[RMDB]
RNA sequence: GGGAACGACUCGAGUAGAGUCGAAAAACGCUCGCUUACGAGCGAGCGAUAUGCGGCAGCAUAGGACUGAAUUGUGGGAGGACUUAUAUGAUCCUACCCCUUUUCAUUUUUAUGCUGCUUUGGAGAACGUAGCAUUAAAUUUCGAUUUAAUGCUACGAAAAGAAACAACAACAACAAC
Reactivity to DMS in 0.01 (KOAc 150mM, MgCl2 10mM, bicine 150mM(pH8.5), 24C), signal-to-noise 6, nucleotides 027 to 126: a100c010g020c000u010c000g020c000u010u010a120c180g020a050g030c000g000a010g010c000g010a030u010a020u010g010c120g000g000c000a010g000c000a010u000a000g010g000a000c050u000g010a000a000u000u000g020u040g020g000g010a100g000g000a020c020u010u030a160u020a090u020g000a130u000c000c000u000a140c000c000c000c000u000u000u000u000c000a000u000u000u000u010u000a000u010g000c010u000g000c000u000u000u000g010g010a150g000a100a190
Reactivity to 2A3 in 0.01 (KOAc 150mM, MgCl2 10mM, bicine 150mM(pH8.5), 24C), signal-to-noise 9, nucleotides 027 to 126: a000c010g010c010u010c000g010c010u060u040a060c260g060a020g000c000g000a000g000c000g010a010u060a070u170g130c050g010g000c000a000g000c010a010u010a000g010g000a000c010u000g010a010a000u030u010g040u300g030g010g000a000g000g010a010c020u190u100a110u080a080u300g150a240u040c020c010u120a300c010c000c000c000u000u000u000u000c000a000u000u000u000u000u000a000u000g000c000u000g000c000u000u010u020g010g010a040g010a050a010